RNA sequence: GGGAACGACUCGAGUAGAGUCGAAAACAUCCACUGCUACGGCAGUGGAUGAACGAGGUAGGUACGCCUACCUCGAAAGGUGGAUGUCACCAUACACAUUAAACGUCCAUGGUACGCCAUGGACGAAUCACUACCCAGCUUUCGAGCUGGGUAGUGAAAAAGAAACAACAACAACAAC
Reactivity to DMS in 0.01 (KOAc 150mM, MgCl2 10mM, bicine 150mM(pH8.5), 24C), signal-to-noise 1, nucleotides 027 to 126: c010a000u000c010c000a010c000u000g020c010u000a130c250g030g000c020a000g030u000g000g000a000u000g010a000a020c030g000a000g020g030u000a000g010g000u000a070c300g020c040c000u000a000c000c000u000c010g020a010a060a090g000g000u000g020g000a020u000g000u000c030a100c030c020a020u000a010c000a010c030a100u030u010a090a060a220c030g000u000c000c010a000u000g010g010u010a110c300g000c010c000a000u000g000g000a000c000g000a030a010
Reactivity to 2A3 in 0.01 (KOAc 150mM, MgCl2 10mM, bicine 150mM(pH8.5), 24C), signal-to-noise 2, nucleotides 027 to 126: c010a000u040c010c000a000c010u000g000c020u030a100c190g130g000c000a020g010u000g000g010a010u000g000a000a000c000g000a010g000g000u000a010g010g010u020a000c130g070c020c010u000a020c000c000u000c000g000a030a010a020g120g010u010g010g040a090u050g030u100c000a070c300c020a010u040a010c030a000c000a050u140u270a100a200a020c020g000u000c000c000a010u000g000g030u030a040c240g050c060c010a000u000g020g000a000c000g000a000a010